[RMDB]
RNA sequence: GGGAACGACUCGAGUAGAGUCGAAAACAUUGUUCUGAUCAUCUGAAGAUCAGCUAUUAGAAGAGAAAGAUCAGUUAAGUUCUUUGGACCUGAUCAGCUUGAUACAAGAACUACUGAUUUCAACUUCAAAACGGGUGCUACUUCGGUAGCACCCGAACAUCUAAAAGUCGUUCGCGACUUUUAGAUGAAAAGAAACAACAACAACAAC
Reactivity to 2A3 in 0.01 (KOAc 150mM, MgCl2 10mM, bicine 150mM(pH8.5), 24C), signal-to-noise 4, nucleotides 027 to 156: c030a020u120u190g040u190u060c010u020g010a010u000c010a030u020c070u190g100a150a040g000a050u000c000a000g020c010u130a120u300u140a070g010a010a010g020a000g040a020a080a000g030a020u000c000a000g000u040u150a160a010g010u010u010c020u070u120u140g070g050a070c020c060u090g090a170u140c090a030g140c050u090u160g000a020u050a140c040a000a020g000a030a000c000u070a010c000u040g000a010u000u030u010c000a030a040c000u010u020c010a010a020a040a060c020g000g000g010u000g010c000u000a000c000u020u030c150g090g000u000a000g000c010a000c000c000c000g000a030a000
Reactivity to DMS in 0.01 (KOAc 150mM, MgCl2 10mM, bicine 150mM(pH8.5), 24C), signal-to-noise 2, nucleotides 027 to 156: c050a070u000u020g020u000u000c000u010g000a000u020c010a140u000c140u010g000a190a280g000a010u000c030a030g020c150u000a120u000u000a180g000a080a030g000a120g000a170a190a030g000a070u000c010a010g020u000u000a070a050g000u000u000c020u000u000u020g010g030a030c060c050u000g020a210u020c140a090g000c080u010u000g030a100u000a130c020a030a030g010a000a030c000u000a080c040u000g000a030u000u000u000c020a080a300c010u010u000c010a040a010a140a150c020g000g000g020u000g010c000u000a010c000u000u010c300g020g000u000a010g000c000a000c000c000c000g000a000a020